[RMDB]
RNA sequence: GGGAACGACUCGAGUAGAGUCGAAAAGGAGGGAACAGCGUGGGAUACAGCUAUUAUACCUAUUAUACCUAUGUGCUAGGCGACUGUCCCAUACAAGUUGCUUUGCUAUGUGGGGGACUUUUUAGCACGCUGCUGGGUCAUUCGUGACCCAGCAGCGAAAAGAAACAACAACAACAAC
Reactivity to 2A3 in 0.01 (KOAc 150mM, MgCl2 10mM, bicine 150mM(pH8.5), 24C), signal-to-noise 1, nucleotides 027 to 126: g180g010a140g000g000g000a090a020c060a010g010c000g100u110g000g040g000a030u170a080c000a010g050c080u080a080u120u000a100u140a060c000c000u000a080u190u300a260u200a000c010c000u130a070u240g040u050g000c030u010a000g030g040c000g020a050c060u070g050u050c000c050c050a000u000a010c000a000a130g000u050u050g000c000u130u110u150g000c000u010a010u020g010u070g000g000g000g000g050a000c010u010u150u000u000u050a000g070c060a000
Conditions: 150 mM KOAc, 10 mM MgCl2 and 150 mM bicine (pH 8.5), 24 C. Chemical mapping of a 177-nucleotide RNA with 2A3.